Background
Chemical mapping of a 177-nucleotide RNA with DMS and 2A3. For DMS the reverse transcriptase was MarathonRT. It was measured as part of the RMDB library OK2TRN. The RNA was probed in 150 mM KOAc, 10 mM MgCl2 and 150 mM bicine (pH 8.5) at 24 C.
[RMDB]
RNA sequence: GGGAACGACUCGAGUAGAGUCGAAAAAAGGAGGAUUGAUGGAGAUGGAUUCAGACAAGGUGCCAUACUUAGCAGAGCUGUAGCAGAGCAGACUUUCAAUAGUUACCAGAGGUCCUGAUUGUCUCAACCAAAGUAACCACUUCGGUGGUUACUUUGGAAAAGAAACAACAACAACAAC
Reactivity to DMS in 0.01 (KOAc 150mM, MgCl2 10mM, bicine 150mM(pH8.5), 24C), signal-to-noise 2, nucleotides 027 to 126: a040a070g000g000a070g000g010a080u010u000g000a130u000g000g000a060g000a100u000g010g020a090u000u000c130a060g050a070c140a060a060g010g020u000g010c040c030a040u000a070c070u000u000a080g020c090a050g010a040g020c030u000g020u000a030g020c110a070g010a060g030c050a060g030a030c020u010u000u010c130a040a070u010a040g020u010u010a040c080c050a100g000a130g010g010u000c020c030u010g010a080u000u000g010u000c020u010c040a060a220
Reactivity to 2A3 in 0.01 (KOAc 150mM, MgCl2 10mM, bicine 150mM(pH8.5), 24C), signal-to-noise 1, nucleotides 027 to 126: a000a000g050g000a020g010g010a030u030u060g000a010u090g040g000a050g010a030u050g040g000a040u110u080c030a050g050a110c020a030a060g060g050u040g000c040c000a040u060a140c040u120u070a010g020c110a010g040a010g020c020u050g000u090a010g050c100a030g010a000g000c010a010g000a090c020u050u050u040c040a050a050u010a120g030u090u040a030c040c020a010g020a000g040g030u050c000c000u060g030a100u020u040g120u000c030u020c020a000a090